Background: Chemical mapping of a 177-nucleotide RNA with DMS and 2A3.
[RMDB]
RNA sequence: GGGAACGACUCGAGUAGAGUCGAAAAUGGAAUGGCUUUGACAAACUUGACUUUUGGAGAUGUAGCCAACAAGGCUACGCUAUGCUCUAUGAAAGGCUGCAUGAGAGCACUUGUGGCCCAACUAAAACUGCCAUUUAGGUUUCGACCUAAAUGGCAGAAAAGAAACAACAACAACAAC
Reactivity to DMS in 0.01 (KOAc 150mM, MgCl2 10mM, bicine 150mM(pH8.5), 24C), signal-to-noise 2, nucleotides 027 to 126: u020g000g020a080a110u010g010g040c040u010u000u000g010a050c020a020a050a050c100u020u000g000a130c160u000u000u010u010g000g010a090g010a130u000g010u000a010g020c060c030a080a090c300a160a100g000g000c010u000a010c020g020c140u010a090u000g000c030u000c000u020a080u000g000a100a120a100g000g030c040u000g010c070a080u010g000a110g010a080g010c030a050c110u000u000g020u000g000g010c010c040c020a050a190c170u000a050a130a100a140
Reactivity to 2A3 in 0.01 (KOAc 150mM, MgCl2 10mM, bicine 150mM(pH8.5), 24C), signal-to-noise 1, nucleotides 027 to 126: u160g020g000a070a060u080g040g040c050u010u020u130g040a050c060a070a090a000c040u060u120g080a120c000u030u040u040u180g020g020a030g000a020u110g010u040a000g000c010c000a050a070c080a020a170g010g000c010u000a010c010g030c010u050a100u200g070c020u000c010u020a090u110g140a140a000a030g040g000c040u050g000c010a030u030g000a040g020a010g160c060a050c110u040u050g000u020g050g020c000c000c000a070a020c000u170a010a000a050a030

Notes
The reactions ran in a buffer of 150 mM KOAc, 10 mM MgCl2 and 150 mM bicine (pH 8.5), at 24 C. For 2A3, 935 sequencing reads were counted. In probing experiments dimethyl sulfate is read out at A N1 and C N3, which are open when not base-paired. It was measured as part of the RMDB library OK2TRN.